RNA sequence: GGGAACGACUCGAGUAGAGUCGAAAAGUCUUUGUGGCAACUACAAUGGACAUAAACGUGAUGACUUAAUUGGUGGAGAUGGAAACUUCAAGUUUGAUGUGGAUGACUUUGCUGAAUCUUGGAGGGUGGAGUCCAAUGAGUUCUGCAACAGACCUCACCUAGCAAUGCUGUUCGCAGCAUUGCUAGGAAAAGAAACAACAACAACAAC
Reactivity to 2A3 in 0.01 (KOAc 150mM, MgCl2 10mM, bicine 150mM(pH8.5), 24C), signal-to-noise 5, nucleotides 027 to 156: g000u020c030u020u020u040g030u010g030g040c110a050a020c020u170a080c040a080a090u060g020g010a020c020a060u230a040a110a000c070g020u080g040a050u070g030a050c020u100u160a100a090u120u110g050g010u060g000g060a070g000a050u070g040g020a060a080a050c050u100u070c060a060a090g030u000u080u070g070a050u030g020u040g060g030a050u070g030a060c060u080u090u130g020c010u040g040a050a040u040c030u040u060g020g010a030g030g020g010u050g020g030a060g000u000c000c030a010a060u070g010a010g030u030u000c020u020g030c030a050a020c010a090g020a020c010c000u010c020a020
Reactivity to DMS in 0.01 (KOAc 150mM, MgCl2 10mM, bicine 150mM(pH8.5), 24C), signal-to-noise 1, nucleotides 027 to 156: g010u000c010u000u000u000g030u010g010g000c050a070a070c050u030a080c050a040a120u000g010g010a060c050a130u000a000a070a100c120g020u000g020a110u000g000a050c010u000u010a100a110u000u000g000g010u020g030g000a070g020a130u000g000g020a130a060a090c040u020u000c060a030a120g000u000u000u010g000a060u000g010u000g000g000a120u000g010a070c100u000u000u000g010c040u010g000a040a110u000c040u000u000g020g000a090g000g040g050u000g000g030a100g050u000c010c070a050a110u000g000a100g020u000u000c010u000g000c020a050a060c080a150g000a070c030c010u000c010a000
Background: Chemical mapping of a 207-nucleotide RNA with 2A3 and DMS. 2A3 adducts were read by reverse transcription with SuperScript II with manganese. Conditions: 150 mM KOAc, 10 mM MgCl2 and 150 mM bicine (pH 8.5), 24 C. The data come from the RNA Mapping Database (RMDB), library OK3TST.